Description: Chemical mapping of a 207-nucleotide RNA with 2A3. Source: RMDB library OK3TST, as collected in RNAgym. Conditions: 150 mM KOAc, 10 mM MgCl2 and 150 mM bicine (pH 8.5), 24 C.
RNA sequence: GGGAACGACUCGAGUAGAGUCGAAAAGAUAGCAACGAUACCUAGAAGCGGUCAGCUGGCGGCCACCGACUCUGUGGACUGGACUUGACUUACAGGAAUCGUGUCACUGGUCGAUGCUAACCAUACAACGGCUAUUCACAGACAUGCACAGACAAUCGUAUGCCGUGUGUUUCGACACACGGCAUACAAAAGAAACAACAACAACAAC
Reactivity to 2A3 in 0.01 (KOAc 150mM, MgCl2 10mM, bicine 150mM(pH8.5), 24C), signal-to-noise 1, nucleotides 027 to 156: g130a010u110a020g030c050a130a050c030g030a070u120a070c010c040u150a130g000a190a040g040c050g030g000u000c000a030g030c010u160g000g140c150g090g030c000c000a000c020c110g120a120c100u020c080u120g020u020g020g020a130c000u010g040g040a040c000u170u300g010a050c020u080u110a000c050a020g070g000a070a080u090c050g000u020g000u020c000a000c060u030g000g050u010c030g020a010u120g040c090u030a050a040c020c000a040u070a120c020a100a000c020g030g020c000u030a030u040u150c060a050c000a050g160a020c000a090u070g000c050a060c000a010g150a010c080a060a140u190c050
As a SHAPE reagent, 2A3 marks flexible, mostly unpaired nucleotides at the ribose 2'-OH.